[RMDB]
RNA sequence: GGGAACGACUCGAGUAGAGUCGAAAAAGAGGAGGCUGGGUUUUGCGAUCUUUAAGCAGAUGACAGGUUCACCCCGUACGGUGCGGAAGUUCGCGCUUCCGUGAAACGCGAAAAUCGGACGGUGGCUAAGACCAAUAACAGUUCGCUGUUAUUGGAACUAUUAGAUGGGGUUCGCCCCAUCUAAUAGAAAAGAAACAACAACAACAAC
Reactivity to DMS in 0.01 (KOAc 150mM, MgCl2 10mM, bicine 150mM(pH8.5), 24C), signal-to-noise 2, nucleotides 027 to 156: a130g000a120g000g010a040g040g030c030u010g000g010g010u010u000u000u020g020c020g010a100u010c050u000u000u010a080a180g020c080a120g000a050u000g010a080c020a100g010g010u000u000c060a120c080c010c000c020g010u000a050c020g020g050u010g010c040g000g020a040a070g060u000u000c180g000c260g000c010u000u010c030c080g000u030g010a030a040a050c020g000c060g000a040a040a070a080u000c020g000g020a020c010g010g030u000g030g000c040u000a070a140g000a180c010c000a030a000u000a000a020c030a030g020u010u010c300g030c000u010g020u000u000a010u010u000g000g010a020a070
Reactivity to 2A3 in 0.01 (KOAc 150mM, MgCl2 10mM, bicine 150mM(pH8.5), 24C), signal-to-noise 4, nucleotides 027 to 156: a000g060a020g020g000a020g020g010c090u050g030g020g020u020u020u070u070g020c030g030a060u040c060u040u150u090a070a040g010c020a010g010a070u050g020a050c030a050g020g000u070u070c040a030c000c020c010c010g010u020a020c040g000g040u030g020c000g010g010a020a000g020u090u230c070g000c020g000c110u000u000c000c000g000u010g030a120a090a010c140g000c010g040a030a060a020a060u040c000g000g000a010c020g020g040u120g010g000c010u050a050a010g040a050c000c000a000a000u010a000a000c010a010g010u040u060c130g050c120u000g000u000u000a000u010u000g000g000a010a020
About this RNA:
An RNA of 207 nucleotides, treated with DMS and 2A3 and read out base by base. Conditions: 150 mM KOAc, 10 mM MgCl2 and 150 mM bicine (pH 8.5), 24 C. For DMS, 5,167 sequencing reads were counted. Source: RMDB library M2RFPK, as collected in RNAgym.